An RNA of 177 nucleotides, treated with 2A3 and DMS and read out base by base. Reactivities are given for positions 27 through 126. It was measured as part of the RMDB library RFM100. For 2A3, 753 sequencing reads were counted. For 2A3 the reverse transcriptase was SuperScript II with manganese. For DMS the reverse transcriptase was MarathonRT.

RNA sequence: GGGAACGACUCGAGUAGAGUCGAAAAAUGCCCGGCAAUUUGGGCAUGCCCCCGCAAGAAUGCUAGCCGAGUAGGGUUGGGUCGGGAAAGGCCUUGUGGUACUGCCUGAUAGGGUGCUGGCGAGUGCAGGCUAUCCUGCAUUCGUGCAGGAUAGCCUAAAAGAAACAACAACAACAAC
Reactivity to 2A3 in 0.01 (KOAc 150mM, MgCl2 10mM, bicine 150mM(pH8.5), 24C), signal-to-noise 2, nucleotides 027 to 126: a000u000g000c000c010c000g000g020c120a290a300u090u190u200g010g010g000c000a000u000g000c000c000c000c000c000g060c020a000a010g110a130a040u070g040c000u060a020g000c050c050g080a080g020u140a060g080g080g010u050u140g140g020g020u210c230g000g000g020a090a000a100g000g080c000c000u100u140g080u060g050g050u080a100c020u070g010c000c000u100g000a070u030a140g010g060g070u030g030c000u000g030g000c000g060a020g050u100g000c040
Reactivity to DMS in 0.01 (KOAc 150mM, MgCl2 10mM, bicine 150mM(pH8.5), 24C), signal-to-noise 2, nucleotides 027 to 126: a050u000g000c000c010c000g040g050c290a090a110u010u030u010g000g050g000c010a050u000g000c100c010c000c020c120g030c160a050a070g020a140a030u020g040c060u000a070g010c080c040g020a100g020u000a140g010g010g000u050u020g000g070g000u010c000g010g000g020a110a110a090g000g010c040c050u000u000g000u020g010g000u000a080c050u000g020c020c000u000g000a090u070a160g000g000g000u020g040c000u000g000g010c000g000a120g000u030g020c160